About this RNA
The record gives the reactivity of an RNA of 177 nucleotides to DMS and 2A3. For 2A3 the reverse transcriptase was SuperScript II with manganese. Reactivities are rounded to 0.1 and cut off at 0 and 3. High DMS reactivity at an A or C suggests that its Watson-Crick edge is free. The reactions ran in a buffer of 150 mM KOAc, 10 mM MgCl2 and 150 mM bicine (pH 8.5), at 24 C. The DMS profile rests on 2,450 reads.
RNA sequence: GGGAACGACUCGAGUAGAGUCGAAAAAUAUUGUAGAUUGGGUUCAAAAUCCCCAUCGCGUCUUGGGAAAGGCAGUAGAGCCAGCAGCCAGCCACCUUUUGUUCUCUAGGGAAUGGAAUAGUCCAAGCUCAGAAGGAGAAUUCGUUCUCCUUCUGAGAAAAGAAACAACAACAACAAC
Reactivity to DMS in 0.01 (KOAc 150mM, MgCl2 10mM, bicine 150mM(pH8.5), 24C), signal-to-noise 3, nucleotides 027 to 126: a130u000a040u010u000g010u010a050g010a080u000u000g010g000g000u000u010c090a100a100a120a170u010c090c000c000c050a050u000c050g030c080g010u000c040u000u010g000g000g000a100a070a100g010g010c040a080g030u000a100g000a160g010c050c040a060g030c060a080g010c010c010a060g000c050c050a070c060c020u000u000u000u000g010u000u000c030u000c030u000a080g000g000g020a090a050u000g000g010a070a070u000a100g000u010c010c040a040a140g010
Reactivity to 2A3 in 0.01 (KOAc 150mM, MgCl2 10mM, bicine 150mM(pH8.5), 24C), signal-to-noise 1, nucleotides 027 to 126: a010u130a030u000u140g030u010a030g050a100u010u090g070g010g010u080u110c030a050a040a080a250u130c000c000c010c000a010u000c020g000c020g030u040c010u090u100g080g000g000a040a070a070g060g010c000a010g040u100a020g010a000g000c020c020a000g000c020a000g010c030c000a000g000c010c000a060c000c000u080u060u060u160g070u130u010c010u000c000u130a090g010g040g060a030a080u130g000g070a040a070u060a120g040u010c010c000a060a030g040